[RMDB]
RNA sequence: GGGAACGACUCGAGUAGAGUCGAAAAUGAGCUGGGCAUGGUGGUACUUGCCUAUAAUCACAGCAUUUGGUGGAAAGAGAUGGGCAUGUCGUGAGUUGUAUAUGACUGAAGAACAAAUAGCUAGUGGUCGUAUUGCAACGUUCGCGUUGCAAUACGAAAAAGAAACAACAACAACAAC
Reactivity to 2A3 in 0.01 (KOAc 150mM, MgCl2 10mM, bicine 150mM(pH8.5), 24C), signal-to-noise 2, nucleotides 027 to 126: u100g040a030g010c070u060g030g000g000c030a010u050g010g000u030g030g010u020a060c010u030u040g010c020c010u090a070u100a060a020u120c030a020c020a040g050c000a060u090u020u160g040g030u020g040g050a090a140a030g100a020g020a020u050g040g000g000c030a030u060g030u050c000g040u030g110a120g020u000u130g070u090a080u010a000u160g080a020c040u040g020a050a060g010a050a010c020a030a030a020u080a030g030c020u040a040g090u040g070g030
Reactivity to DMS in 0.01 (KOAc 150mM, MgCl2 10mM, bicine 150mM(pH8.5), 24C), signal-to-noise 2, nucleotides 027 to 126: u010g020a050g020c050u000g020g010g030c040a060u000g010g020u010g020g020u010a120c060u010u000g010c010c020u000a060u000a050a050u010c060a100c110a090g010c060a130u000u010u010g000g030u000g000g010a050a100a100g000a070g000a090u000g000g010g010c060a020u010g010u010c020g030u000g020a080g020u000u000g010u000a070u000a000u020g010a050c030u000g030a120a060g010a090a050c100a060a100a070u010a110g020c040u000a110g010u000g010g020

About this RNA
This 177-nucleotide RNA was probed chemically with 2A3 and DMS. 2A3 adducts were read by reverse transcription with SuperScript II with manganese. The RNA was probed in 150 mM KOAc, 10 mM MgCl2 and 150 mM bicine (pH 8.5) at 24 C. It was measured as part of the RMDB library OK2TST.